[RMDB]
Structure probing data (2A3 and DMS) for a 207-nucleotide construct.
It was measured as part of the RMDB library OK3TST.
2A3 adducts were read by reverse transcription with SuperScript II with manganese.
Conditions: 150 mM KOAc, 10 mM MgCl2 and 150 mM bicine (pH 8.5), 24 C.

RNA sequence: GGGAACGACUCGAGUAGAGUCGAAAACUCGCUCAAACAUACAGAGGUGUUGUGCGAAAUGAAUCUCUCUGCAUUAGAAUGGUCGAAGAAUCAGCGGCUAUUCGAGACCUAAUUAGAAGCCGCAUUAACAGCUUUGGAACACGCCUUGCUGACGUGACAGUAUUUAAUGAUUCGUCAUUAAAUACUGAAAAGAAACAACAACAACAAC
Reactivity to 2A3 in 0.01 (KOAc 150mM, MgCl2 10mM, bicine 150mM(pH8.5), 24C), signal-to-noise 9, nucleotides 027 to 156: c020u010c000g020c010u040c030a110a090a060c010a020u160a040c040a040g070a030g000g040u020g000u010u030g010u020g010c020g030a050a040a090u220g060a110a130u070c060u000c000u000c010u090g030c050a120u070u120a090g110a220a120u150g010g010u000c010g010a090a020g000a030a050u040c050a040g010c000g000g000c000u020a010u000u010c000g000a010g000a000c000c020u120a170a090u140u120a060g060a140a010g000c000c000g010c020a010u060u090a070a070c020a000g030c030u130u190u250g050g030a070a010c020a010c050g030c000c010u030u040g000c010u010g020a030c020g020u020g020a020
Reactivity to DMS in 0.01 (KOAc 150mM, MgCl2 10mM, bicine 150mM(pH8.5), 24C), signal-to-noise 5, nucleotides 027 to 156: c030u000c040g030c040u010c060a090a080a100c080a120u010a160c040a080g010a060g010g040u000g010u000u000g020u000g010c040g020a090a090a080u000g010a100a110u000c050u000c020u000c030u000g010c040a090u010u000a130g010a070a090u000g010g020u000c010g010a160a120g010a110a110u000c060a130g010c030g010g010c020u000a130u000u000c010g010a300g000a080c030c010u000a050a130u000u000a160g010a090a060g020c010c010g020c040a180u010u000a070a070c060a060g000c040u000u010u000g020g000a090a130c040a050c020g010c010c030u000u010g020c080u000g010a070c010g020u010g000a300